[RMDB]
RNA sequence: GGGAACGACUCGAGUAGAGUCGAAAAAGGUAAUCUGUGGCGGUAGUGUACAUGUUGGUGUGUUUAAGAAGGCUUCGCUCUUGUAACAACAACCGCAGUCUGACUCUUGCACGCACAAGUCUAGUGUUUCCAAGAAUUUAGGAGGUAGGUAGCAUACAUGUAGAACCAGAUUCGUCUGGUUCUACAUAAAAGAAACAACAACAACAAC
Reactivity to DMS in 0.01 (KOAc 150mM, MgCl2 10mM, bicine 150mM(pH8.5), 24C), signal-to-noise 3, nucleotides 027 to 156: a020g000g000u000a060a110u010c040u000g020u000g010g010c030g020g050u000a070g020u000g030u000a090c080a110u010g000u000u000g030g010u000g010u000g020u000u000u000a070a120g020a140a100g020g020c030u000u000c090g010c060u000c040u000u000g000u010a090a120c130a100a090c020a030a040c030c020g010c050a070g000u010c020u000g010a080c050u000c010u000u000g000c060a060c120g020c020a060c050a070a110g000u010c070u020a080g020u000g010u010u010u010c040c000a070a110g020a070a090u010u000u000a090g030g000a070g050g030u000a040g010g000u010a050g020c060a090u000a100c110
Reactivity to 2A3 in 0.01 (KOAc 150mM, MgCl2 10mM, bicine 150mM(pH8.5), 24C), signal-to-noise 4, nucleotides 027 to 156: a000g060g000u050a040a040u040c050u090g040u050g010g010c030g010g050u060a030g010u040g040u090a040c030a070u070g030u060u050g070g010u030g010u020g000u010u070u040a070a060g030a030a010g000g000c000u050u040c040g000c010u010c020u040u030g040u100a060a030c070a010a010c010a010a030c300c010g000c020a000g000u000c020u030g040a090c010u000c000u070u040g000c030a010c050g050c010a030c020a070a070g050u030c030u080a040g020u030g030u030u050u030c010c000a030a020g030a050a080u110u180u160a060g010g020a010g000g010u030a040g050g020u030a010g060c050a050u080a110c050

Chemical mapping of a 207-nucleotide RNA with DMS and 2A3. Reactivities are given for positions 27 through 156. The RNA was probed in 150 mM KOAc, 10 mM MgCl2 and 150 mM bicine (pH 8.5) at 24 C.